[RMDB]
RNA sequence: GGGAACGACUCGAGUAGAGUCGAAAAUUCGGCUCUGGCAGCCUUGGAUGCCGUCGCUACUCUCGUGUGGGGCUUGGAUACUUCCUCGGGCAUUCUGAGUGGAAAAGGCAGCUUCAUGCGGCUGGAGAUCGGUAGAGUUAUUCGUAACUCUACCGAUAAAAGAAACAACAACAACAAC
Reactivity to DMS in 0.01 (KOAc 150mM, MgCl2 10mM, bicine 150mM(pH8.5), 24C), signal-to-noise 7, nucleotides 027 to 126: u000u000c030g010g000c000u000c020u010g000g000c060a060g000c040c080u010u000g020g010a060u000g010c040c020g010u000c090g000c050u000a100c040u000c030u010c050g030u010g020u000g010g000g000g010c120u000u000g020g010a120u010a070c100u000u000c080c010u010c030g010g010g020c190a070u000u010c030u000g010a050g020u000g010g010a040a050a120a150g010g010c070a050g000c020u000u000c040a050u000g010c030g010g010c060u000g000g010a110g000
Reactivity to 2A3 in 0.01 (KOAc 150mM, MgCl2 10mM, bicine 150mM(pH8.5), 24C), signal-to-noise 4, nucleotides 027 to 126: u110u030c010g020g000c000u010c030u090g060g010c040a020g020c010c020u020u090g110g010a040u070g010c030c000g040u020c040g010c040u060a070c000u020c010u030c030g020u050g040u060g020g040g020g000c000u060u090g110g010a030u060a160c020u050u040c000c000u010c010g040g030g000c060a050u300u050c030u040g010a030g030u120g050g010a070a150a030a040g060g000c010a020g010c010u020u020c010a040u060g010c000g020g000c020u030g040g010a070g020
This 177-nucleotide RNA was probed chemically with DMS and 2A3. DMS adducts were read by reverse transcription with MarathonRT.